[RMDB]
Source: RMDB library M2RFPK, as collected in RNAgym.
This 207-nucleotide RNA was probed chemically with DMS and 2A3.
For 2A3, 1,731 sequencing reads were counted.
2A3 is a SHAPE reagent: it acylates the 2'-hydroxyl of flexible nucleotides of all four kinds.
Values cover nucleotides 27 to 156.
For 2A3 the reverse transcriptase was SuperScript II with manganese.
RNA sequence: GGGAACGACUCGAGUAGAGUCGAAAAGAAAGAAAGAAGAGUCACCAGGAGGCAAGGAUCCUCAACUACGUUAUUCGGGCACCUUGAGUUGAGAGGAGCUAGUGGUGCGCCCGGCCUGGAGAUCAAAACACGACAGGCGGGUUCGCCCGCCUGUCAAUCAAUGUGAAAGGUUCGCCUUUCACAUUGAAAAAGAAACAACAACAACAAC
Reactivity to DMS in 0.01 (KOAc 150mM, MgCl2 10mM, bicine 150mM(pH8.5), 24C), signal-to-noise 1, nucleotides 027 to 156: g010a150a140a090g050a190a020a090g020a080a140g030a080g000u010c040a080c040c060a050g000g030a180g010g010c020a030a230g000g000a110u010c050c000u010c020a050a050c000u000a010c100g000u000u000a180u010u020c000g030g000g020c050a080c080c020u000u000g010a050g060u010u010g040a080g000a070g020g000a000g010c050u000a060g010u010g030g000u000g000c000g020c040c000c020g020g030c030c030u030g080g020a070g010a030u000c050a060a070a120a120c150a090c050g000a050c000a000g040g000c010g040g020g030u000u000c200g040c010c010c000g020c010c020u000g000u010c010a020a070
Reactivity to 2A3 in 0.01 (KOAc 150mM, MgCl2 10mM, bicine 150mM(pH8.5), 24C), signal-to-noise 3, nucleotides 027 to 156: g050a000a060a010g030a040a060a030g070a090a020g010a010g020u030c020a010c040c020a020g020g040a060g000g060c060a070a200g020g000a010u010c000c010u030c010a010a000c020u230a090c050g110u240u060a080u110u080c020g000g080g000c010a010c010c020u130u260g030a010g010u010u000g010a000g000a000g010g000a010g000c000u020a010g070u010g110g000u010g020c030g010c010c010c010g030g000c000c010u020g020g010a060g010a020u100c050a000a070a010a020c100a020c090g010a000c000a000g010g000c030g000g010g010u040u040c100g040c020c000c000g000c010c010u000g000u000c000a000a000